RNA sequence: GGGAACGACUCGAGUAGAGUCGAAAAGCUCUGUAAUGGGAUGGGAUCCGAAGCCCCAUUGAGGGAUAAUACAGGCUCUCCUAUCCAACUCCUAUUCCAACACGUCCUCGUCGUACAGAGUGGUAACUAAGGUAUAGCUCCUUCGGGAGCUAUACAAGUGACUAUAAUUGUUCGCAAUUAUAGUCACAAAAGAAACAACAACAACAAC
Reactivity to 2A3 in 0.01 (KOAc 150mM, MgCl2 10mM, bicine 150mM(pH8.5), 24C), signal-to-noise 3, nucleotides 027 to 156: g010c010u000c020u030g060u060a160a180u170g120g000g000a010u000g000g000g010a060u220c020c000g010a060a020g040c000c000c000c030a130u120u160g040a300g000g030g000a040u100a190a040u140a220c100a070g000g000c010u000c000u000c010c000u010a020u050c000c010a010a060c010u060c000c020u050a100u100u080c060c020a060a040c040a040c090g080u090c030c040u110c030g110u030c030g020u030a020c000a000g020a020g030u030g020g040u090a110a100c070u050a100a070g090g000u000a000u000a000g010c000u000c010c000u020u030c050g080g000g000a000g070c000u000a000u000a000c000a000a000
Reactivity to DMS in 0.01 (KOAc 150mM, MgCl2 10mM, bicine 150mM(pH8.5), 24C), signal-to-noise 2, nucleotides 027 to 156: g000c020u010c010u000g030u000a070a080u000g030g030g030a040u000g000g010g000a080u000c050c040g000a190a180g030c030c000c010c030a260u000u010g010a150g010g010g000a130u000a050a150u010a120c080a170g000g010c020u000c010u000c050c040u000a140u010c030c010a070a070c070u020c010c020u010a100u000u000c020c030a060a130c120a100c060g000u000c050c010u010c070g010u010c030g000u000a010c020a030g000a050g040u000g010g010u000a030a110c060u000a070a130g000g010u000a000u010a010g010c010u000c000c020u010u000c300g050g040g020a020g010c000u000a000u000a000c000a050a100
The data come from the RNA Mapping Database (RMDB), library M2RFPK. An RNA of 207 nucleotides, treated with 2A3 and DMS and read out base by base. The RNA was probed in 150 mM KOAc, 10 mM MgCl2 and 150 mM bicine (pH 8.5) at 24 C. For DMS the reverse transcriptase was MarathonRT.